[RMDB]
RNA sequence: GGGAACGACUCGAGUAGAGUCGAAAAGCGCAAAUCCACAAACGCCAACGAUGAGCCUUUCGCUGUAGCCGCUUAAGGCAACAGCCGGGGCCGCCUGAGCCCUGUUACCAAAGACGGCUGGCGGGGGUAAUUACUUAUUGCUUCGGCAAUAAGUAAAUCGAAUUAGAAGAUUCGUCUUCUAAUUCGAAAAAGAAACAACAACAACAAC
Reactivity to DMS in 0.01 (KOAc 150mM, MgCl2 10mM, bicine 150mM(pH8.5), 24C), signal-to-noise 2, nucleotides 027 to 156: g010c030g010c030a040a040a050u010c040c030a050c040a060a300a060c020g030c020c030a040a150c050g020a150u000g010a110g010c000c000u000u000u000c000g000c010u010g000u000a050g030c000c000g010c130u000u000a100a190g020g000c000a020a030c000a020g020c040c020g000g010g020g070c010c020g010c080c050u010g020a160g000c000c010c000u000g000u010u000a090c040c030a060a220a160g000a090c130g020g040c060u000g010g000c000g000g000g000g020g010u010a050a110u000u010a010c000u000u000a000u000u000g000c000u000u000c300g030g010c010a020a010u000a010a020g020u000a000a010a150
Reactivity to 2A3 in 0.01 (KOAc 150mM, MgCl2 10mM, bicine 150mM(pH8.5), 24C), signal-to-noise 5, nucleotides 027 to 156: g050c040g010c050a050a070a060u070c050c020a080c080a130a140a020c110g000c030c020a080a040c070g110a120u130g060a050g030c030c000u060u190u220c050g000c010u040g050u130a040g010c000c010g060c140u230u170a140a070g010g000c010a020a010c000a010g000c010c010g000g000g000g000c000c020g030c010c030u050g010a010g010c000c000c020u030g050u060u070a040c020c000a020a010a000g030a040c030g000g010c020u030g020g010c020g010g000g020g010g000u050a060a080u070u010a010c000u000u000a000u010u000g000c000u030u030c140g110g010c000a000a000u000a000a000g000u000a010a000a010